[RMDB]
RNA sequence: GGGAACGACUCGAGUAGAGUCGAAAAUAAGAGCCCACCGCGCCGCUGGUGACAGUGGUGGCAAGGUAAACCCCACCGGGAGCAAGACCGAAUAGGGAUGACACGGGGCGGGCGAAAGCCUGUUCACGUCAAGGUAUAUCUUCGGAUAUACCUUGACAAAAGAAACAACAACAACAAC
Reactivity to DMS in 0.01 (KOAc 150mM, MgCl2 10mM, bicine 150mM(pH8.5), 24C), signal-to-noise 2, nucleotides 027 to 126: u000a070a160g000a190g010c000c000c000a120c060c060g000c000g010c000c010g010c010u000g000g010u020g000a230c010a010g040u000g000g010u020g010g050c050a130a070g020g030u000a070a080a110c030c020c010c040a150c130c010g080g000g000a100g020c100a050a060g010a150c010c010g010a090a090u010a120g000g010g010a050u020g000a080c180a090c150g030g000g020g050c000g000g000g010c000g000a120a020a150g020c000c010u010g010u000u000c030a090c140
Reactivity to 2A3 in 0.01 (KOAc 150mM, MgCl2 10mM, bicine 150mM(pH8.5), 24C), signal-to-noise 1, nucleotides 027 to 126: u130a020a060g090a010g090c040c000c000a010c000c010g030c000g000c010c010g000c000u040g000g040u100g010a030c000a020g000u000g030g020u030g080g000c020a030a050g070g000u110a130a160a160c020c000c010c000a030c000c030g040g010g010a080g070c080a150a000g070a140c010c000g040a070a080u090a160g000g010g000a080u080g060a020c020a010c130g050g010g020g000c040g010g030g010c000g040a020a000a010g000c000c010u000g020u040u070c110a080c050
Annotation: Structure probing data (DMS and 2A3) for a 177-nucleotide construct. For DMS the reverse transcriptase was MarathonRT. The DMS profile rests on 1,028 reads. For 2A3, 1,233 sequencing reads were counted. Source: RMDB library RFMREP, as collected in RNAgym. For 2A3 the reverse transcriptase was SuperScript II with manganese.